[RMDB]
RNA sequence: GGGAACGACUCGAGUAGAGUCGAAAAGAUAUGGAUCAGUUGGAGGACAUGAACAGAUCCACACAUAAUACUCGGAAACGAGUGAUAUGUGUGGAUCUGUUCAACAGCCUCCACCUGAUCCUAAGUCGCAUCUUCAUAUCUUCGGAUAUGAAGAUGCAAAAGAAACAACAACAACAAC
Reactivity to DMS in 0.01 (KOAc 150mM, MgCl2 10mM, bicine 150mM(pH8.5), 24C), signal-to-noise 1, nucleotides 027 to 126: g010a110u010a280u000g010g030a000u010c000a010g010u000u000g000g000a040g000g000a060c060a300u000g000a010a050c010a000g000a030u000c000c000a000c000a010c000a040u000a000a070u000a060c000u000c000g020g000a130a020a280c010g010a000g020u000g010a070u000a000u000g000u030g070u010g010g000a000u010c000u000g000u000u000c010a030a080c280a250g000c010c000u010c010c000a010c050c000u000g000a000u000c010c000u010a000a070g010u010c120
This 177-nucleotide RNA was probed chemically with DMS. DMS adducts were read by reverse transcription with MarathonRT. Conditions: 150 mM KOAc, 10 mM MgCl2 and 150 mM bicine (pH 8.5), 24 C.